[RMDB]
RNA sequence: GGGAACGACUCGAGUAGAGUCGAAAAGUGCACACUUCGGUGUGCACAAAAAACCUUUGUGAACAGCUAUGGAGAUAUGAUCCUCUCCCAUUGGGAGAGGCGUAUAUCGUUGAAAUAGCCGUUCACUCUGGUAAAAAACCUAUAUUCGUAUAGGUAACUUUGAGGUUAGGUUCGCCUAACCUCAAAGAAAAGAAACAACAACAACAAC
Reactivity to 2A3 in 0.01 (KOAc 150mM, MgCl2 10mM, bicine 150mM(pH8.5), 24C), signal-to-noise 1, nucleotides 027 to 156: g000u020g010c010a000c010a010c020u070u170c300g050g000u000g000u000g000c010a000c000a000a020a000a000a000a000c000c000u000u020u060g010u000g000a000a000c010a000g050c000u000a000u020g020g010a020g000a000u020a010u040g060a070u070c010c000u000c000u010c030c020c110a300u160u300g010g000g000a000g000a000g020g000c000g000u040a010u000a000u000c010g090u160u040g060a030a000a000u010a000g000c000c000g000u010u000c000a020c000u000c000u010g000g020u100a140a160a000a000a020a020c020c010u050a030u020a000u010u140c170g040u080a010u020a010g000g030u090a070a070

The data come from the RNA Mapping Database (RMDB), library RNAMAK.
Chemical mapping of a 207-nucleotide RNA with 2A3.
Reactivities are rounded to 0.1 and cut off at 0 and 3.
Reactivities are given for positions 27 through 156.
2A3 adducts were read by reverse transcription with SuperScript II with manganese.
The RNA was probed in 150 mM KOAc, 10 mM MgCl2 and 150 mM bicine (pH 8.5) at 24 C.